About this RNA: Structure probing data (2A3) for a 207-nucleotide construct.
RNA sequence: GGGAACGACUCGAGUAGAGUCGAAAAUGGUUUCGACAGGAUACUCUGGUCAUAUAAUAGCAGUGGUGUGGUAGACCAUAAUACUUCUAGGUUUGAUAAAAUGCAAACAAAAACGAAGAAAACACAAACGAAGUUCCAACAUUUAUGUUAAAUGCUGCGAAUGUUACUCCUUCGGGAGUAACAUUCGAAAAGAAACAACAACAACAAC
Reactivity to 2A3 in 0.01 (KOAc 150mM, MgCl2 10mM, bicine 150mM(pH8.5), 24C), signal-to-noise 1, nucleotides 027 to 156: u160g090g010u000u000u020c000g000a000c020a000g080g050a090u020a030c010u010c020u030g000g000u000c000a030u080a000u020a200a100u060a020g000c020a000g000u000g000g030u040g000u010g040g010u070a060g010a020c000c030a030u000a090a020u030a090c000u000u000c010u010a020g060g070u000u000u060g060a040u190a030a240a070a080u300g020c000a010a060a000c030a010a070a030a040a000c060g040a030a010g010a060a110a070a000c110a000c000a020a130a000c080g020a060a000g000u060u000c000c010a030a000c000a010u070u130u080a100u120g030u060u070a080a250a100u140g010c010u040g000

It was measured as part of the RMDB library ARCHII. Reactivities are given for positions 27 through 156.